[RMDB]
RNA sequence: GGGAACGACUCGAGUAGAGUCGAAAAUUGCAACCAGAGACUUGCAGACACUGGUCUGUCAGCCUUUCUCAGAAUAUUUAAAGUACAGUAUGAAAAUUCCUUGUCUAUUAAAAAUCUAGAGACACACAACUAGAGUCCUUCAUAUUUUUAAAGUAUACCUACCGUAAUCAUUCGUGAUUACGGUAGGAAAAGAAACAACAACAACAAC
Reactivity to 2A3 in 0.01 (KOAc 150mM, MgCl2 10mM, bicine 150mM(pH8.5), 24C), signal-to-noise 1, nucleotides 027 to 156: u020u030g080c030a040a020c020c040a020g100a000g000a070c020u020u130g020c030a000g000a020c000a000c160u290g060g010u000c000u030g020u080c050a000g020c000c030u110u090u000c020u000c000a010g060a130a030u170a050u060u200u070a160a060a000g020u080a060c000a020g180u210a050u120g080a020a120a070a160u130u080c000c000u020u070g000u000c020u030a070u130u110a210a190a050a020a020u100c080u020a020g000a020g080a070c020a000c020a050c030a170a200c030u000a030g000a020g160u030c000c030u050u050c070a020u060a160u290u080u000u100u160a060a130a040g190u200a140u210a120
An RNA of 207 nucleotides, treated with 2A3 and read out base by base. 2A3 adducts were read by reverse transcription with SuperScript II with manganese. The reactions ran in a buffer of 150 mM KOAc, 10 mM MgCl2 and 150 mM bicine (pH 8.5), at 24 C.